[RMDB]
RNA sequence: GGGAACGACUCGAGUAGAGUCGAAAAUGGGACAAACACGCUUCACAAUGUGCGGCAAAGAAACAUUGUUUAUGCAAAGGCACUUCGCAAUGUGUGCUCAAACAUUGCUUAUUCAAACACGCUUCACAAAAGAAUCAGUGGUUCGCCACUGAUUCAAGAUACGAACUAAGUUCGCUUAGUUCGUAUCAAAAGAAACAACAACAACAAC
Reactivity to DMS in 0.01 (KOAc 150mM, MgCl2 10mM, bicine 150mM(pH8.5), 24C), signal-to-noise 3, nucleotides 027 to 156: u000g010g020g010a170c060a100a070a110c120a040c000g020c020u000u000c040a050c010a010a060u020g060u000g000c040g000g010c030a080a090a070g010a050a030a020c010a030u000u010g020u010u010u000a070u010g010c030a070a140a100g000g010c020a060c050u000u000c150g030c070a120a080u010g050u010g000u010g040c030u000c040a080a150a050c030a050u000u000g010c030u010u000a080u010u010c080a100a100a130c110a090c070g020c020u000u000c030a130c100a080a120a130a160g000a030a000u000c000a020g020u000g000g000u010u000c300g020c040c010a000c010u000g000a000u000u000c000a020a070
Reactivity to 2A3 in 0.01 (KOAc 150mM, MgCl2 10mM, bicine 150mM(pH8.5), 24C), signal-to-noise 9, nucleotides 027 to 156: u090g010g000g050a030c050a010a140a010c070a020c060g000c000u010u010c010a000c000a010a010u010g000u010g010c010g030g030c050a080a070a070g070a020a040a000c000a000u000u010g090u040u110u110a110u130g060c060a050a070a090g180g000c010a000c010u030u030c030g000c010a010a010u010g010u000g030u010g030c080u110c170a040a040a000c000a010u010u010g000c000u060u110a150u120u130c100a040a100a040c060a020c110g100c060u110u110c090a050c040a120a110a040a040g000a010a000u000c000a000g000u010g030g040u040u050c160g040c040c000a000c000u000g000a000u000u000c000a000a000
Source: RMDB library M2RFPK, as collected in RNAgym. An RNA of 207 nucleotides, treated with DMS and 2A3 and read out base by base. The 2A3 profile rests on 28,640 reads. The RNA was probed in 150 mM KOAc, 10 mM MgCl2 and 150 mM bicine (pH 8.5) at 24 C. Reactivities are given for positions 27 through 156.